[RMDB]
RNA sequence: GGGAACGACUCGAGUAGAGUCGAAAAGAGCGGCGAUGUGAGAAAAUUUCCAGCACAAGCCCAAAUAAGCAAAGGUAAAUGGCAAAUGGGUGAAAUGCUCAAGAAAAUGAAGCCAACGAGGAGCAGCCAGCAAUAAUUGCUUCGGCAAUUAUUGCUGAAAAGAAACAACAACAACAAC
Reactivity to 2A3 in 0.01 (KOAc 150mM, MgCl2 10mM, bicine 150mM(pH8.5), 24C), signal-to-noise 2, nucleotides 027 to 126: g050a000g000c000g010g000c030g010a080u110g030u070g060a060g160a010a000a030a060u090u070u000c010c020a030g000c000a010c000a030a000g000c000c000c000a050a010a000u190a080a050g010c050a110a070a020g190g010u270a140a090a050u090g080g010c020a000a030a060u060g000g000g010u020g000a070a090a040u110g020c000u000c010a020a020g070a030a110a020a010u130g090a020a050g020c000c000a040a000c050g020a010g030g020a010g030c030a010g000c060
Reactivity to DMS in 0.01 (KOAc 150mM, MgCl2 10mM, bicine 150mM(pH8.5), 24C), signal-to-noise 2, nucleotides 027 to 126: g030a150g030c010g000g020c060g040a050u000g010u010g020a150g000a020a050a100a060u040u020u000c040c110a070g000c010a020c040a070a300g020c040c010c010a080a040a160u040a070a180g050c020a040a100a070g000g010u030a100a160a080u000g020g000c020a020a120a130u000g000g000g010u000g000a010a140a120u000g010c010u010c080a180a110g010a050a010a050a080u010g060a050a100g000c030c020a020a180c120g010a110g000g000a060g000c030a040g010c070
Source information: Chemical mapping of a 177-nucleotide RNA with 2A3 and DMS. DMS adducts were read by reverse transcription with MarathonRT. The reactions ran in a buffer of 150 mM KOAc, 10 mM MgCl2 and 150 mM bicine (pH 8.5), at 24 C. For 2A3, 1,116 sequencing reads were counted. The DMS profile rests on 2,172 reads. It was measured as part of the RMDB library RFM100.